The record gives the reactivity of an RNA of 177 nucleotides to 2A3 and DMS. 2A3 adducts were read by reverse transcription with SuperScript II with manganese. The reactions ran in a buffer of 150 mM KOAc, 10 mM MgCl2 and 150 mM bicine (pH 8.5), at 24 C.
RNA sequence: GGGAACGACUCGAGUAGAGUCGAAAAGAUAUGGACGAUCGCAUAAGCAACAGCUGUUAUUCGGAAACGAAUGGGCAGACAUGCUUCCGAUCGUCCUAAGUCAAAAUCCGACACUUCGGUGUCGGAAGGAACAGAAUAGGUUCGCCUAUUCUGUUCCAAAAGAAACAACAACAACAAC
Reactivity to 2A3 in 0.01 (KOAc 150mM, MgCl2 10mM, bicine 150mM(pH8.5), 24C), signal-to-noise 5, nucleotides 027 to 126: g000a000u010a000u050g000g000a000c010g010a010u020c000g000c050a090u150a300a010g000c100a090a110c060a210g010c000u010g000u020u010a010u010u010c000g000g000a000a000a000c000g010a000a000u050g010g080g010c000a010g030a020c050a220u300g000c000u030u010c020c020g000a000u000c010g000u010c000c000u000a000a000g000u000c010a010a010a000a230u020c000c000g010a000c000a000c010u100u140c300g190g000u010g000u010c000g000g000a010a090
Reactivity to DMS in 0.01 (KOAc 150mM, MgCl2 10mM, bicine 150mM(pH8.5), 24C), signal-to-noise 4, nucleotides 027 to 126: g010a010u000a020u020g000g020a020c000g020a000u000c010g020c190a160u010a260a020g010c010a110a050c110a260g000c000u010g000u000u000a010u000u000c010g030g000a010a010a050c010g000a000a000u000g030g000g010c010a000g000a010c030a300u010g030c000u000u010c240c000g000a000u000c010g000u000c000c000u000a000a040g000u020c010a110a090a130a150u000c000c000g000a020c000a000c030u000u000c270g030g000u000g020u010c010g000g000a020a020